[RMDB]
RNA sequence: GGGAACGACUCGAGUAGAGUCGAAAAGCACGUAGGUUCAGAUGAUGGGCCCGCAUCUGUACGAAAGUGAGACGAAAGUCCAGCCUACGUGCAUGAGCACGCGGGCCCCGUGCUCUACCGCAAAAGACAGCCGGUACCUGUUCGCAGGUACCGGCUGAAAAGAAACAACAACAACAAC
Reactivity to 2A3 in 0.01 (KOAc 150mM, MgCl2 10mM, bicine 150mM(pH8.5), 24C), signal-to-noise 1, nucleotides 027 to 126: g020c000a000c000g000u000a000g050g000u020u070c050a000g000a000u010g000a020u000g020g000g000c000c000c000g010c000a000u000c000u030g090u230a010c090g190a130a100a030g030u120g000a130g040a000c000g110a220a020a000g000u010c000c000a000g010c000c000u000a000c000g000u000g000c000a000u000g000a000g000c000a000c020g040c030g000g000g000c000c000c000c000g000u000g000c020u000c000u010a030c000c000g020c020a020a000a090a090g230a040